[RMDB]
Source information: Structure probing data (2A3 and DMS) for a 177-nucleotide construct. It was measured as part of the RMDB library OK2TST. Conditions: 150 mM KOAc, 10 mM MgCl2 and 150 mM bicine (pH 8.5), 24 C.

RNA sequence: GGGAACGACUCGAGUAGAGUCGAAAACGCGUAUGCGAUCUGGCCCAUCGGAUCGGGAUCUGGCGGUUGUGGCGUGGGGUGGCGUUAUGAAAAUCCUGGCCGUGGAUCUCUGGAUCGAUGGUCAAUAGUCCAUUAUGAAAUUCGUUUCAUAAUGGACAAAAGAAACAACAACAACAAC
Reactivity to 2A3 in 0.01 (KOAc 150mM, MgCl2 10mM, bicine 150mM(pH8.5), 24C), signal-to-noise 7, nucleotides 027 to 126: c030g080c010g100u270a090u300g020c030g020a050u030c060u100g080g000c020c010c020a030u050c030g090g010a030u040c010g010g020g020a050u050c040u070g100g040c040g040g030u100u070g110u120g070g010c070g030u070g010g030g000g000u050g010g000c030g030u060u070a080u130g110a040a070a020a050u040c010c020u020g030g000c010c000g020u010g030g000a010u010c050u020c100u270g090g000a010u010c040g050a020u030g010g000u030c010a010a040u050a030
Reactivity to DMS in 0.01 (KOAc 150mM, MgCl2 10mM, bicine 150mM(pH8.5), 24C), signal-to-noise 7, nucleotides 027 to 126: c060g010c040g010u010a060u010g010c020g010a110u010c080u010g010g010c090c020c070a080u000c040g030g010a050u000c030g010g010g010a060u000c040u000g020g020c050g010g000u000u000g010u010g010g000c100g010u010g010g000g010g020u000g000g010c060g010u000u010a070u010g000a080a080a090a100u000c040c040u000g000g010c010c010g020u000g000g000a010u000c000u000c160u010g030g010a020u000c010g010a020u010g010g010u000c030a070a090u010a150
Reactivities are rounded to 0.1 and cut off at 0 and 3.